[RMDB]
RNA sequence: GGGAACGACUCGAGUAGAGUCGAAAAAAUUUGAAGCUCAGGACGUUCCAGUAAGUAUAGAUUAUCCAUUGGCACUAGAUGAUAUGGAUGUUAAGGGUAUUUAUUAUGUGAAGAAUUAUAUUGAGAGAUUACUAUACCCAUUCGUGGGUAUAGUAAUAAAAGAAACAACAACAACAAC
Reactivity to 2A3 in 0.01 (KOAc 150mM, MgCl2 10mM, bicine 150mM(pH8.5), 24C), signal-to-noise 4, nucleotides 027 to 126: a000a010u100u100u130g030a080a010g000c000u010c030a010g030g060a100c020g000u000u000c000c000a020g120u090a120a010g050u050a040u070a040g100a050u080u080a010u040c060c060a110u050u020g040g000c040a020c040u070a060g040a260u200g040a060u140a070u200g100g010a080u020g010u030u060a020a040g030g010g000u010a040u030u080u000a020u100u040a040u090g140u120g050a070a120g050a070a050u280u110a130u070a110u300u180g010a080g000a000g010
Reactivity to DMS in 0.01 (KOAc 150mM, MgCl2 10mM, bicine 150mM(pH8.5), 24C), signal-to-noise 7, nucleotides 027 to 126: a070a060u020u020u010g000a150a130g010c000u000c020a040g000g000a130c090g000u000u000c010c010a080g000u020a030a080g020u010a030u010a060g010a050u020u020a020u010c020c010a050u010u000g010g000c090a050c080u020a060g010a130u030g000a160u040a040u010g010g010a050u000g020u010u000a040a070g000g000g020u010a010u000u010u000a030u020u010a050u020g000u010g020a080a130g000a070a050u020u030a090u030a110u030u020g000a130g010a150g000